[RMDB]
RNA sequence: GGGAACGACUCGAGUAGAGUCGAAAAGAGCGAUAAAGAUGACGCCAUCGACUGGCAGGCCUACUUUCAUUUGCGCAACCGGUUGGUGGUCGCGGCUAUGCACUGGGAUGGCGACGUCACCGGCCUAGUAGCAUUAUUUAUUCGUAAAUAAUGCUACAAAAGAAACAACAACAACAAC
Reactivity to 2A3 in 0.01 (KOAc 150mM, MgCl2 10mM, bicine 150mM(pH8.5), 24C), signal-to-noise 9, nucleotides 027 to 126: g070a010g030c070g060a080u100a160a170a040g030a030u050g010a010c000g010c000c000a000u020c010g160a170c080u010g010g000c010a010g020g010c010c010u090a120c060u220u230u150c080a220u070u100u260g000c040g000c030a040a050c030c020g290g080u200u260g060g020u090g020g020u100c010g000c000g010g000c020u100a230u210g010c100a130c300u040g030g020g020a010u020g020g000c000g000a000c000g000u010c000a010c050c000g070g000c000c010u030a040
Reactivity to DMS in 0.01 (KOAc 150mM, MgCl2 10mM, bicine 150mM(pH8.5), 24C), signal-to-noise 9, nucleotides 027 to 126: g010a130g010c040g020a110u010a070a110a100g010a050u000g000a110c030g010c010c000a010u000c030g010a190c050u000g000g000c020a040g010g010c010c020u000a110c220u010u010u010c210a140u010u000u010g020c020g010c050a190a060c030c010g010g010u010u010g020g030u000g010g020u010c030g020c100g010g000c010u000a100u000g010c020a070c050u000g000g000g010a040u000g000g010c010g010a050c030g020u000c010a080c070c030g010g000c020c020u000a090
Overview:
Structure probing data (2A3 and DMS) for a 177-nucleotide construct. Values cover nucleotides 27 to 126. Conditions: 150 mM KOAc, 10 mM MgCl2 and 150 mM bicine (pH 8.5), 24 C. For 2A3, 40,210 sequencing reads were counted. For 2A3 the reverse transcriptase was SuperScript II with manganese. High 2A3 reactivity points to a flexible backbone, as in loops and unpaired stretches. The data come from the RNA Mapping Database (RMDB), library OK2TST.